[RMDB]
RNA sequence: GGGAACGACUCGAGUAGAGUCGAAAACAUUUUCGCAAUUCGGUGGAAGGGGCAAUGUCCUUUGCCCAGACGUCGAUCCUUGCCUUUUCCUUCGUCAUGCCGCGCGGCCACACACGAUCGACAAGCACUGAUCAGGAGGAUUCGUCCUCCUGAUCAGAAAAGAAACAACAACAACAAC
Reactivity to DMS in 0.01 (KOAc 150mM, MgCl2 10mM, bicine 150mM(pH8.5), 24C), signal-to-noise 2, nucleotides 027 to 126: c120a110u000u010u000u020c090g010c050a040a110u000u010c030g020g000u000g000g000a050a070g000g000g010g020c010a040a010u000g000u000c050c100u000u010u000g010c000c000c020a140g000a130c130g020u000c040g000a020u000c070c120u010u010g000c010c010u000u000u000u000c000c010u010u000c080g010u010c150a100u010g000c000c020g000c140g050c040g010g040c030c050a040c090a090c100a060c110g000a010u000c040g020a020c030a110a120g010c200a170
Reactivity to 2A3 in 0.01 (KOAc 150mM, MgCl2 10mM, bicine 150mM(pH8.5), 24C), signal-to-noise 2, nucleotides 027 to 126: c000a020u070u070u080u110c080g000c100a060a110u140u110c040g040g010u060g030g030a050a050g020g020g000g000c010a040a050u060g080u120c000c030u000u040u080g040c000c010c000a010g010a030c000g010u020c010g020a020u000c000c000u000u030g030c000c010u000u030u050u040c000c000u020u080c030g100u040c000a070u180g000c030c010g050c010g000c010g030g000c000c020a020c010a010c000a010c030g020a040u010c020g030a020c020a050a010g090c050a050
This 177-nucleotide RNA was probed chemically with DMS and 2A3.
Conditions: 150 mM KOAc, 10 mM MgCl2 and 150 mM bicine (pH 8.5), 24 C.
For 2A3, 2,349 sequencing reads were counted.
The data come from the RNA Mapping Database (RMDB), library OK2TST.
The DMS profile rests on 1,872 reads.
Values cover nucleotides 27 to 126.